[RMDB]
RNA sequence: GGGAACGACUCGAGUAGAGUCGAAAAACUGAUUUCUAAGAAAGCAGCAGAGGUAGACACUUUCUGCCUGUGACUGGAUUGAUCGGAUGCCAAAAAACCCAGAUUCUAGUCUAGGUUCUGCAAUAAGUCUUCUAGGUGACUUGGGAAAUCAUUUAGAAAUAUUACGUAGCUUCGGCUACGUAAUAUUAAAAGAAACAACAACAACAAC
Reactivity to 2A3 in 0.01 (KOAc 150mM, MgCl2 10mM, bicine 150mM(pH8.5), 24C), signal-to-noise 5, nucleotides 027 to 156: a010c030u030g010a040u040u080u060c030u070a140a080g040a120a110a010g070c020a010g020c010a000g010a010g040g020u070a020g050a060c040a020c150u110u250u050c020u030g050c070c000u050g040u030g040a050c010u010g000g020a010u040u120g020a020u040c030g030g010a050u090g090c060c040a060a100a040a050a050a060c020c010c010a020g010a030u130u060c030u120a020g030u010c010u010a020g020g030u060u080c040u080g020c010a040a100u100a210a030g030u010c010u070u010c030u070a040g010g020u010g030a030c010u020u020g030g010g010a010a010a020u010c010a000u040u060u050a030g010a030
Reactivity to DMS in 0.01 (KOAc 150mM, MgCl2 10mM, bicine 150mM(pH8.5), 24C), signal-to-noise 2, nucleotides 027 to 156: a060c040u020g010a070u000u000u000c020u010a120a150g010a080a080a090g000c040a040g010c040a080g020a080g020g000u000a070g020a100c140a080c110u000u000u010c010u000g010c010c000u010g020u000g000a100c040u010g040g010a070u000u010g010a090u000c040g000g010a080u000g000c120c110a010a070a080a050a050a030c030c010c010a130g040a080u010u000c070u000a090g030u000c010u000a060g000g030u000u000c010u010g020c020a070a120u010a080a120g010u010c050u000u000c010u000a020g030g000u000g000a040c020u000u000g020g020g000a170a060a050u000c020a020u010u000u010a050g000a070